[RMDB]
RNA sequence: GGGAACGACUCGAGUAGAGUCGAAAAUUGGACUACUUUAUAGCCAACCCUUCCCCACCCCGAGACCCUGGCAAGCUUGGCCUAUUUUCUGUCACUAUAGUUUUGCCUUUUUCCGGAAUGAUCUAUAAUGUUAUGCAAGUCAUUGGGAAUGGUGCUGUAUUGCUGCAUAAUUCGUUAUGCAGCAAUAAAAAGAAACAACAACAACAAC
Reactivity to 2A3 in 0.01 (KOAc 150mM, MgCl2 10mM, bicine 150mM(pH8.5), 24C), signal-to-noise 5, nucleotides 027 to 156: u040u030g020g040a050c030u060a020c040u210u270u190a260u270a120g000c000c010a020a060c020c010c000u020u020c010c000c020c030a030c010c020c000c010g020a010g030a090c010c020c020u030g000g000c030a020a020g020c020u050u060g030g020c020c030u030a110u040u110u050u060c070u090g070u060c010a020c120u080a060u020a180g020u030u060u100u130g000c000c000u050u080u010u090u010c040c020g010g080a060a030u050g030a030u030c030u060a110u040a230a080u130g070u170u100a040u130g070c050a080a020g030u010c030a040u030u090g030g010g000a020a040u040g020g020u060g020c020u040g030
Reactivity to DMS in 0.01 (KOAc 150mM, MgCl2 10mM, bicine 150mM(pH8.5), 24C), signal-to-noise 3, nucleotides 027 to 156: u010u000g020g020a150c010u000a050c070u000u000u000a170u000a060g020c030c020a060a130c000c010c040u000u000c010c000c010c010a140c070c010c020c030g010a130g000a070c020c020c030u000g020g040c010a050a070g030c030u000u000g020g020c020c030u000a120u000u010u000u010c080u000g030u000c060a070c050u000a080u000a070g010u000u000u000u000g010c000c010u030u000u000u000u010c040c060g000g020a090a070u010g010a070u010c040u000a100u020a050a100u000g020u000u010a080u010g020c060a060a120g010u000c010a070u000u010g020g000g010a080a160u000g010g020u000g020c010u000g020